[RMDB]
RNA sequence: GGGAACGACUCGAGUAGAGUCGAAAAUGGUCGGGAUAUUGCGUUGUCGAUCAAACGAGUACGCGAAAUGCGGGUGUAUCUCGACUCGUCGUCAGAUGUUACCAAUCACGUAACCCAGCGUUUUGCGCUCUUUCAUACGCUUCGGCGUAUGAAAGAGAAAAGAAACAACAACAACAAC
Reactivity to DMS in 0.01 (KOAc 150mM, MgCl2 10mM, bicine 150mM(pH8.5), 24C), signal-to-noise 3, nucleotides 027 to 126: u010g020g000u000c000g000g000g000a030u010a030u010u000g030c110g020u000u000g040u010c080g000a080u000c180a070a100a130c100g000a060g020u000a100c030g010c000g000a010a030a040u000g010c030g010g000g000u010g000u000a050u000c000u020c040g010a020c020u010c140g010u000c080g030u010c190a090g000a030u000g000u000u020a190c070c070a070a090u010c160a100c160g000u020a040a070c020c020c000a100g040c030g030u000u000u000u010g020c090g010
Reactivity to 2A3 in 0.01 (KOAc 150mM, MgCl2 10mM, bicine 150mM(pH8.5), 24C), signal-to-noise 2, nucleotides 027 to 126: u130g000g040u000c000g020g010g000a000u030a040u070u120g040c040g040u020u080g170u100c050g030a110u120c000a090a000a060c050g000a040g140u150a020c010g010c020g020a070a050a010u100g020c000g050g020g000u030g010u010a040u000c040u000c010g000a000c020u000c030g070u020c020g010u000c070a040g010a070u060g020u040u070a140c000c020a020a060u160c110a040c170g060u040a040a030c000c020c000a020g010c040g000u020u010u070u070g010c050g000
An RNA of 177 nucleotides, treated with DMS and 2A3 and read out base by base.
The 2A3 profile rests on 1,817 reads.
For 2A3 the reverse transcriptase was SuperScript II with manganese.
The DMS profile rests on 2,597 reads.